[RMDB]
RNA sequence: GGGAACGACUCGAGUAGAGUCGAAAAGAUAUGGAUGCGCAACUAUCUAAUUCACAUGCAAGAGCCAGUGUCGGAAACGACACGGCUUGAUGACCAUGUGAGAUUAGAUAGUUGCGCAUCCUAAGUCCAUUUACUCUACGUUCGCGUAGAGUAAAUGAAAAGAAACAACAACAACAAC
Reactivity to DMS in 0.01 (KOAc 150mM, MgCl2 10mM, bicine 150mM(pH8.5), 24C), signal-to-noise 6, nucleotides 027 to 126: g010a110u010a300u000g000g000a010u000g010c000g000c000a010a010c010u010a000u010c000u010a000a010u000u000c010a010c010a010u000g000c040a070a110g010a000g000c000c010a140g070u000g010u000c000g010g000a110a100a250c010g010a010c000a000c000g000g000c000u000u000g000a060u010g000a150c300c000a010u000g000u000g000a030g000a020u000u000a000g000a010u000a000g010u010u000g010c000g000c000a000u000c000c000u010a010a060g000u000c040